Source information:
The record gives the reactivity of an RNA of 177 nucleotides to DMS and 2A3. For 2A3 the reverse transcriptase was SuperScript II with manganese.
RNA sequence: GGGAACGACUCGAGUAGAGUCGAAAACCUAACUCUUUUGAACAGGAAUUAGGACUGUUCAUACUAAGCGAACGGGAGGUGGGAUGGAGCAAAUUAUGCGGAAUAACGGUGGAGGAAGCAGCAUACGCGACAUGUUUGCUUUCGAGCAAACAUGUCGAAAAGAAACAACAACAACAAC
Reactivity to DMS in 0.01 (KOAc 150mM, MgCl2 10mM, bicine 150mM(pH8.5), 24C), signal-to-noise 1, nucleotides 027 to 126: c030c000u020a020a180c160u020c080u000u010u010u000g040a030a030c040a050g020g020a180a150u020u040a150g030g030a250c000u020g000u050u000c000a020u020a070c300u010a050a010g000c010g030a100a090c050g000g010g030a040g010g020u020g010g010g000a070u000g030g000a000g010c100a020a050a080u000u000a070u000g020c080g000g000a060a080u000a100a100c120g010g010u000g000g010a050g000g000a040a100g020c160a020g000c030a100u000a140c180g000
Reactivity to 2A3 in 0.01 (KOAc 150mM, MgCl2 10mM, bicine 150mM(pH8.5), 24C), signal-to-noise 1, nucleotides 027 to 126: c010c010u100a160a000c030u010c050u160u160u060u100g040a030a030c010a000g070g100a170a120u210u080a210g090g210a090c020u030g030u000u000c000a000u010a010c030u060a070a090g030c020g070a100a040c090g040g000g020a090g000g050u010g130g050g000a000u050g000g030a060g050c000a020a000a020u130u080a070u150g000c040g060g070a040a040u100a150a030c090g020g030u040g030g000a040g000g000a060a020g000c040a020g000c000a000u090a090c070g030
Values cover nucleotides 27 to 126. The DMS profile rests on 590 reads. For 2A3, 622 sequencing reads were counted. The data come from the RNA Mapping Database (RMDB), library OK2TST.